Source information: Structure probing data (DMS) for a 177-nucleotide construct. DMS adducts were read by reverse transcription with MarathonRT. Values are in units of 0.01, from 0 to 300, in steps of 10. The reactions ran in a buffer of 150 mM KOAc, 10 mM MgCl2 and 150 mM bicine (pH 8.5), at 24 C. The data come from the RNA Mapping Database (RMDB), library TTRINS. For DMS, 1,032 sequencing reads were counted.
RNA sequence: GGGAACGACUCGAGUAGAGUCGAAAAGAUAUGGAAUUAGCGGGCCAAGCGCAUAGGGAGCGUCUCACUCGGAAACGAGUGGGACGCAUCGAUCUAUGACCCGCUUGGCCCGCUAAUUCCUAAGUCAGGAGUAGAAUAUGUUCGCAUAUUCUACUCCAAAAGAAACAACAACAACAAC
Reactivity to DMS in 0.01 (KOAc 150mM, MgCl2 10mM, bicine 150mM(pH8.5), 24C), signal-to-noise 1, nucleotides 027 to 126: g000a050u000a300u010g000g000a000a000u000u000a010g030c040g040g030g000c000c000a000a040g050c010g050c030a010u000a010g010g010g030a080g030c000g020u010c000u000c010a020c000u000c010g020g000a120a120a280c010g000a020g050u010g010g000g000a010c010g000c000a000u030c240g000a080u020c010u000a010u040g000a180c240c230c120g030c030u000u000g000g000c020c010c000g000c010u010a000a000u000u000c000c000u000a050a040g010u000c090a060